The record gives the reactivity of an RNA of 177 nucleotides to DMS.
[RMDB]
RNA sequence: GGGAACGACUCGAGUAGAGUCGAAAAUGGGAUCGAUCUGAAGCUCAACCACGAUUCAUUGUGAAGCCUUACGGAACUGAAGUUGGAGAGGGACAAUCUGCUAAUUUCUAUUGCAGAGUUAUUGCAAGACCGGUAGUCAUUUCGAUGACUACCGGUCAAAAGAAACAACAACAACAAC
Reactivity to DMS in 0.01 (KOAc 150mM, MgCl2 10mM, bicine 150mM(pH8.5), 24C), signal-to-noise 1, nucleotides 027 to 126: u010g030g010g040a080u000c080g000a050u000c130u000g000a180a140g020c070u000c050a100a150c100c010a060c050g050a080u010u000c100a040u010u000g060u000g010a070a110g010c090c010u000u000a100c090g020g010a070a120c110u000g010a040a040g010u010u010g010g000a020g010a040g000g000g010a120c150a080a110u000c000u020g030c000u020a070a100u000u010u010c170u030a150u010u000g020c020a020g020a070g000u030u010a030u030u020g020c130a050a130

The reactions ran in a buffer of 150 mM KOAc, 10 mM MgCl2 and 150 mM bicine (pH 8.5), at 24 C.